RNA sequence: GGGAACGACUCGAGUAGAGUCGAAAAACUCAACGGCCGGAGGCCAAGGUCAAGUUGAAUGUUGCAGUCCAGCCAGCGUCAGAAAACUGCCAUGGAAGCCUGGAAACCUAGGCGGCUUUGAAAGAACCAAUCUCGUAUACUUCGGUAUACGAGAUUGAAAAGAAACAACAACAACAAC
Reactivity to DMS in 0.01 (KOAc 150mM, MgCl2 10mM, bicine 150mM(pH8.5), 24C), signal-to-noise 1, nucleotides 027 to 126: a080c030u000c020a020a090c100g000g020c040c010g000g040a150g010g000c040c010a030a080g010g010u010c070a050a120g000u010u000g010a050a050u000g000u000u000g030c030a070g000u000c020c030a030g020c050c050a060g010c040g030u000c060a110g000a100a060a060a050c040u000g050c030c020a040u010g000g010a070a070g000c030c030u000g000g020a080a080a080c180c020u000a130g010g010c000g010g000c030u010u000u010g000a080a080a110g000a110a130c160

Structure probing data (DMS) for a 177-nucleotide construct. It was measured as part of the RMDB library RFMREP. DMS adducts were read by reverse transcription with MarathonRT. The RNA was probed in 150 mM KOAc, 10 mM MgCl2 and 150 mM bicine (pH 8.5) at 24 C.